[RMDB]
The data come from the RNA Mapping Database (RMDB), library OK3TST. Chemical mapping of a 207-nucleotide RNA with 2A3. For 2A3 the reverse transcriptase was SuperScript II with manganese. Reactivities are given for positions 27 through 156. The RNA was probed in 150 mM KOAc, 10 mM MgCl2 and 150 mM bicine (pH 8.5) at 24 C. As a SHAPE reagent, 2A3 marks flexible, mostly unpaired nucleotides at the ribose 2'-OH.

RNA sequence: GGGAACGACUCGAGUAGAGUCGAAAAUAGAAAGCUGCUGUUGUGGAUCUGGUACCAGUGGCUAAAGUGCCUACUCCCACUGAACAGUUCUCAGAACAUUUUGUAAUUCUAAUGAGGUAGUACAGUGGCUUACUAUGCCAGACUUCAGAAUAGGACAGAGCAGUCAAAAUUUCGAUUUUGACUGCUCAAAAGAAACAACAACAACAAC
Reactivity to 2A3 in 0.01 (KOAc 150mM, MgCl2 10mM, bicine 150mM(pH8.5), 24C), signal-to-noise 1, nucleotides 027 to 156: u090a010g050a000a040a010g010c040u010g020c000u010g010u060u040g030u140g010g110a090u050c000u040g000g000u010a030c000c110a040g050u010g010g000c020u140a000a180a000g020u100g110c000c030u060a040c010u080c000c020c050a030c000u000g030a080a010c000a030g080u090u000c010u000c000a090g030a110a060c000a080u080u030u120u240g060u060a070a220u300u100c030u040a020a170u110g000a040g070g030u100a060g000u050a050c030a000g000u010g000g080c010u030u060a050c030u050a010u150g080c010c000a000g200a080c000u070u010c140a010g070a110a200u120a030g020g020a010c120a000